[RMDB]
RNA sequence: GGGAACGACUCGAGUAGAGUCGAAAAAAUGGUGACUGACAUGAAGUGUAAUCGUAAGCGCUGGUCACGCGAAGACCGGGAAUUUAUCGAAGCCAACGUCGGGUUUUUGAGGGUUGAAGAAAUGGCGGAGUCUCAUUAUGUUCGCAUAAUGAGACUCAAAAGAAACAACAACAACAAC
Reactivity to DMS in 0.01 (KOAc 150mM, MgCl2 10mM, bicine 150mM(pH8.5), 24C), signal-to-noise 3, nucleotides 027 to 126: a080a060u010g020g030u010g020a070c050u000g010a110c070a130u020g020a070a120g010u010g010u000a070a060u000c060g010u000a070a150g000c120g010c020u000g010g000u000c030a120c090g000c130g010a100a060g000a040c030c020g000g000g000a070a080u000u000u000a100u010c070g000a050a070g010c030c020a050a070c120g010u000c040g010g030g000u000u010u000u000u010g020a110g000g000g000u000u000g010a050a100g010a020a050a060u010g010g010c080g010
Reactivity to 2A3 in 0.01 (KOAc 150mM, MgCl2 10mM, bicine 150mM(pH8.5), 24C), signal-to-noise 2, nucleotides 027 to 126: a010a020u150g060g010u030g030a050c010u030g000a020c030a120u060g120a080a060g020u030g040u110a070a100u110c150g050u090a060a030g060c040g000c090u010g030g020u000c000a020c050g060c030g010a080a000g030a020c000c000g000g060g060a070a070u130u100u070a160u170c050g020a060a010g010c030c000a000a000c030g000u000c020g060g020g030u070u100u000u000u150g030a040g030g050g020u080u120g050a070a090g010a040a100a020u080g040g000c010g030
Structure probing data (DMS and 2A3) for a 177-nucleotide construct. For 2A3 the reverse transcriptase was SuperScript II with manganese. Conditions: 150 mM KOAc, 10 mM MgCl2 and 150 mM bicine (pH 8.5), 24 C.